[RMDB]
RNA sequence: GGGAACGACUCGAGUAGAGUCGAAAAUACUAGGGAUUGAAGCACUGAAUGAUGCUGUAUCAGGUGUAUCAUUCUACAACAACAGAUGCUCGGAUGAUCAAUGUCUGCGUUGGAAAGAGACAUCAGACUAGGCGUAGGAAUUCGUUCCUACGCCUAGAAAAGAAACAACAACAACAAC
Reactivity to DMS in 0.01 (KOAc 150mM, MgCl2 10mM, bicine 150mM(pH8.5), 24C), signal-to-noise 3, nucleotides 027 to 126: u010a080c100u010a070g010g000g020a110u020u010g000a060a300g030c030a100c060u000g010a060a050u020g010a050u010g010c060u000g010u000a130u010c190a120g010g010u000g030u010a050u010c020a040u000u000c010u000a090c110a040a030c100a090a100c050a040g010a070u000g010c060u010c040g030g000a140u000g030a090u010c070a030a070u000g000u000c030u000g010c120g000u010u010g010g010a060a050a180g000a060g010a040c030a050u000c090a110g020a230
Reactivity to 2A3 in 0.01 (KOAc 150mM, MgCl2 10mM, bicine 150mM(pH8.5), 24C), signal-to-noise 1, nucleotides 027 to 126: u140a010c060u060a070g150g000g000a040u030u070g110a060a040g040c030a030c080u040g030a020a140u010g020a020u110g000c150u160g010u090a150u130c030a060g060g100u000g020u000a090u050c010a020u010u000c020u090a060c010a130a010c020a040a000c030a040g090a180u060g010c000u020c060g070g000a050u090g030a030u080c080a050a040u090g010u140c070u080g050c080g120u130u040g050g050a100a060a030g060a060g020a050c010a060u130c010a030g080a090
The data come from the RNA Mapping Database (RMDB), library OK2TRN. This 177-nucleotide RNA was probed chemically with DMS and 2A3. Reactivities are given for positions 27 through 126. For 2A3 the reverse transcriptase was SuperScript II with manganese.